[RMDB]
RNA sequence: GGGAACGACUCGAGUAGAGUCGAAAAUCGAUUUAGAGAAGACUGAGGCGAAUUCGGUUAUCUCUUGUCUUCCUGAAGAGUCUUCAUAGUCAAUCAGAACCGAUUUGAUCUGUCCGUCUUGAGAAAAAAUCGCCAUAAUUUUCGAAUUAUGGCGAUUAAAAGAAACAACAACAACAAC
Reactivity to DMS in 0.01 (KOAc 150mM, MgCl2 10mM, bicine 150mM(pH8.5), 24C), signal-to-noise 3, nucleotides 027 to 126: u000c040g030a120u000u000u000a070g010a110g010a220a300g000a030c000u000g020a090g000g020c050g020a080a120u010u000c050g010g000u000u010a130u000c030u000c080u000u000g010u000c020u000u000c040c000u010g000a030a060g010a210g010u010c010u010u000c060a060u000a040g020u000c010a040a110u010c090a120g000a040a090c050c020g000a040u000u020u000g010a130u000c030u000g010u010c020c070g010u000c030u000u000g020a170g010a000a030a080a070
Reactivity to 2A3 in 0.01 (KOAc 150mM, MgCl2 10mM, bicine 150mM(pH8.5), 24C), signal-to-noise 1, nucleotides 027 to 126: u060c000g000a010u110u170u120a100g020a000g050a180a010g020a040c010u000g040a020g020g120c070g070a050a080u090u050c020g050g020u060u030a140u010c000u020c000u000u020g000u010c020u020u020c000c010u030g000a050a020g000a020g140u010c020u060u040c020a090u240a120g020u010c020a010a080u080c070a010g020a060a050c010c020g000a000u000u020u040g060a090u000c020u060g070u000c040c010g060u060c010u030u120g070a070g080a060a020a010a090
Chemical mapping of a 177-nucleotide RNA with DMS and 2A3.
The data come from the RNA Mapping Database (RMDB), library OK2TST.
For 2A3, 1,031 sequencing reads were counted.
Values cover nucleotides 27 to 126.
Reactivities are rounded to 0.1 and cut off at 0 and 3.
For DMS the reverse transcriptase was MarathonRT.
The RNA was probed in 150 mM KOAc, 10 mM MgCl2 and 150 mM bicine (pH 8.5) at 24 C.